RNA sequence: GGGAACGACUCGAGUAGAGUCGAAAAGCUCGUCCACUCCGAUCGAGCCACUAGGAGCUAUCGGAACUGUUAGCGGAGUGACCAAAUCUCUCGACUUCAGUUGGACAUCGUGAGAUCGAGGUCCAAAGACGUUUCAUGCCUUCGGGUAUGGAACGUCAAAAGAAACAACAACAACAAC
Reactivity to DMS in 0.01 (KOAc 150mM, MgCl2 10mM, bicine 150mM(pH8.5), 24C), signal-to-noise 7, nucleotides 027 to 126: g000c010u000c040g000u010c040c060a130c110u010c010c020g000a020u010c100g000a050g010c020c040a160c230u040a110g000g000a090g000c020u000a030u010c010g010g000a050a070c110u000g000u030u020a050g010c080g000g010a100g010u020g010a070c030c030a170a170a040u000c000u000c000u000c010g010a060c230u000u010c030a130g020u020u050g010g010a040c200a110u010c010g000u010g010a050g010a040u020c050g000a170g000g000u000c000c040a040a070a110
Reactivity to 2A3 in 0.01 (KOAc 150mM, MgCl2 10mM, bicine 150mM(pH8.5), 24C), signal-to-noise 9, nucleotides 027 to 126: g010c000u010c020g040u040c020c010a020c020u000c010c000g010a030u040c050g070a010g020c000c000a070c060u140a100g050g050a100g020c000u010a010u020c010g020g010a030a020c020u040g010u100u070a010g020c020g030g040a040g010u100g020a040c010c010a030a050a040u020c020u000c000u020c010g060a060c030u060u040c060a130g040u110u110g070g010a010c010a040u020c010g000u010g040a070g000a020u070c040g030a040g000g010u000c000c000a020a030a020

Conditions: 150 mM KOAc, 10 mM MgCl2 and 150 mM bicine (pH 8.5), 24 C.
Structure probing data (DMS and 2A3) for a 177-nucleotide construct.